[RMDB]
RNA sequence: GGGAACGACUCGAGUAGAGUCGAAAACUUUAAAAUACUCUCAUGCAUCACUGAACGACAGGGAUACGUUCUGAGAAGAGUGUCAUUAAGCAAUUUCAUCAUUAUGCGAAUACCACAGAGUGCACUUACACAAACCCAGAAGGUGCAGCCUUCUACACUAGUCGGACUCAUUCGUGAGUCCGACUAGAAAAGAAACAACAACAACAAC
Reactivity to 2A3 in 0.01 (KOAc 150mM, MgCl2 10mM, bicine 150mM(pH8.5), 24C), signal-to-noise 1, nucleotides 027 to 156: c000u120u000u130a130a090a030a090u150a010c000u140c040u000c020a060u100g070c000a060u130c010a050c030u040g010a060a000c000g210a140c050a200g020g030g010a000u060a110c000g000u000u020c000u040g070a060g090a110a000g050a020g000u000g030u030c030a150u050u110a020a030g040c010a050a110u010u090u000c050a070u020c050a060u040u060a040u210g010c010g020a060a000u070a220c100c000a040c020a100g040a010g030u060g060c070a030c000u060u170a010c020a010c020a100a150a150c020c050c000a030g040a000a000g030g000u070g060c060a030g030c000c020u020u000c000u040a000c000a020